[RMDB]
RNA sequence: GGGAACGACUCGAGUAGAGUCGAAAAAUCGCGCCUGGUCGGAACAUAACGACGGCGGGCCGGUGGGGAAUCAGGGGGCUACCGUGGCAUAGCGAUGAGACAGCCCCUCCGAUGGCACCAAGCGUCGCACACUGGCCAUACUUCGGUAUGGCCAGAACACAUGUAUAUAUUUCGAUAUAUACAUGUGAAAAGAAACAACAACAACAAC
Reactivity to DMS in 0.01 (KOAc 150mM, MgCl2 10mM, bicine 150mM(pH8.5), 24C), signal-to-noise 2, nucleotides 027 to 156: a090u010c010g030c040g010c020c000u010g030g050u000c070g000g030a130a300c100a140u000a050a070c020g030a100c020g000g020c020g030g030g010c030c030g050g030u010g010g010g000g000a210a070u020c000a070g000g010g000g020g020c030u000a010c010c020g000u000g000g020c050a090u000a110g020c060g000a250u010g010a170g010a130c070a110g000c040c010c010c000u030c020c020g000a040u000g010g000c000a030c020c000a020a120g010c090g020u000c030g020c050a100c080a170c010u000g010g000c020c000a000u010a010c000u000u010c270g030g050u010a010u000g000g010c000c020a000g010a010a100
Reactivity to 2A3 in 0.01 (KOAc 150mM, MgCl2 10mM, bicine 150mM(pH8.5), 24C), signal-to-noise 3, nucleotides 027 to 156: a000u060c040g010c010g030c010c010u040g080g000u050c010g020g030a180a080c020a130u280a120a040c050g030a010c010g060g070c010g000g000g010c000c020g030g020u080g000g000g020g030a060a130u150c080a170g050g010g000g000g050c000u040a070c050c000g020u040g040g040c060a060u110a080g030c010g040a030u070g000a030g030a060c060a020g000c000c000c000c000u020c010c030g020a030u010g050g000c010a050c090c030a100a030g060c010g080u040c020g000c020a040c000a010c060u000g020g010c010c000a010u000a000c000u020u070c110g050g000u010a000u000g000g000c000c000a000g000a020a000
Chemical mapping of a 207-nucleotide RNA with DMS and 2A3. The data come from the RNA Mapping Database (RMDB), library M2RFPK.